[RMDB]
RNA sequence: GGGAACGACUCGAGUAGAGUCGAAAAGGAGGGCAGUUUUUCUGUGUUGUGUCGUUAGAGGCCGGUUUUGCGACGCGCGAGACCUUGAUGCUGAUUCCGGCCUAUUUGCAUCGGUCGUUUGCCUCCAGGCACGGGGCGGGUUCGCUCGCUUCGUGCCAAAAGAAACAACAACAACAAC
Reactivity to DMS in 0.01 (KOAc 150mM, MgCl2 10mM, bicine 150mM(pH8.5), 24C), signal-to-noise 7, nucleotides 027 to 126: g000g010a030g000g010g010c020a040g000u020u020u020u020u020c030u020g020u010g020u010u010g010u000g000u010c030g020u000u030a080g010a120g010g000c000c000g000g010u020u020u020u030g010c040g000a030c030g010c050g000c080g010a090g000a030c010c010u010u050g030a020u000g010c000u010g000a190u010u020c010c010g000g010c010c010u000a070u020u020u010g000c000a010u000c010g010g010u000c020g020u010u020u010g000c010c000u010c010c020a190
Reactivity to 2A3 in 0.01 (KOAc 150mM, MgCl2 10mM, bicine 150mM(pH8.5), 24C), signal-to-noise 7, nucleotides 027 to 126: g030g020a030g010g080g050c060a070g030u050u050u040u080u080c060u060g050u010g050u160u120g030u030g000u010c010g000u020u140a060g010a040g060g000c010c020g020g030u040u080u150u300g020c010g000a000c000g000c010g000c020g020a060g000a030c020c010u060u230g000a010u010g010c020u050g020a050u140u060c000c000g000g000c000c000u010a050u020u100u080g000c000a010u000c010g000g000u000c010g010u060u120u080g060c000c000u000c000c010a010
An RNA of 177 nucleotides, treated with DMS and 2A3 and read out base by base. For DMS, 49,874 sequencing reads were counted. The reactions ran in a buffer of 150 mM KOAc, 10 mM MgCl2 and 150 mM bicine (pH 8.5), at 24 C.